[RMDB]
RNA sequence: GGGAACGACUCGAGUAGAGUCGAAAACAUGAACGCCUCCGCGCUGAGCAUCCUGACAUCUCAGAAGUAUGGCUGGAUGGCUUGUAUCAUUCCAACGUAUUUUCGUUUAACGCCAGAACCCCUCGUGCGUCCCAGCAAACUUCGGUUUGCUGGGACGAAAAGAAACAACAACAACAAC
Reactivity to 2A3 in 0.01 (KOAc 150mM, MgCl2 10mM, bicine 150mM(pH8.5), 24C), signal-to-noise 2, nucleotides 027 to 126: c050a110u030g080a080a000c000g000c000c030u010c000c010g070c020g010c010u000g020a020g000c020a030u110c000c030u040g010a030c020a120u000c070u010c110a060g040a230a030g070u190a110u140g040g000c040u030g000g020a030u160g050g050c000u040u090g050u050a120u050c000a020u130u000c000c010a020a110c020g000u030a140u050u090u000u100c040g000u000u080u260a050a020c080g020c000c010a000g060a180a160c000c040c010c000u070c090g080u140g020